[RMDB]
RNA sequence: GGGAACGACUCGAGUAGAGUCGAAAAAGAGCCGGAUACGUCCGGCUCAACGGGGGAUACGUGUGGUGCCGUCCGCUCCCCCUAUGGCAUAACAAAUGCACCGCACACUAGGCUACGGCCUAGUGAAAAAAUCCCUACAUGUUCGCAUGUAGGGAAAGGAUUACUUCAUGUUCGCAUGAAGUAAUCCAAAAGAAACAACAACAACAAC
Reactivity to 2A3 in 0.01 (KOAc 150mM, MgCl2 10mM, bicine 150mM(pH8.5), 24C), signal-to-noise 1, nucleotides 027 to 156: a000g000a000g030c000c020g010g010a020u020a040c140g080u010c010c000g000g000c000u000c000a000a000c010g000g000g000g000g040a020u040a090c010g000u000g000u020g020g020u000g030c010c000g030u040c020c010g040c040u030c000c000c000c010c040u060a160u140g110g000c070a130u040a260a030c030a110a070a010u080g020c010a010c010c020g000c000a010c000a000c000u000a000g000g010c000u000a010c230g040g020c000c000u000a000g000u010g030a060a000a000a000a000a010u000c000c000c000u000a000c000a000u020g020u030u030c110g000c160a000u000g000u000a000g000g000g000a000a010a010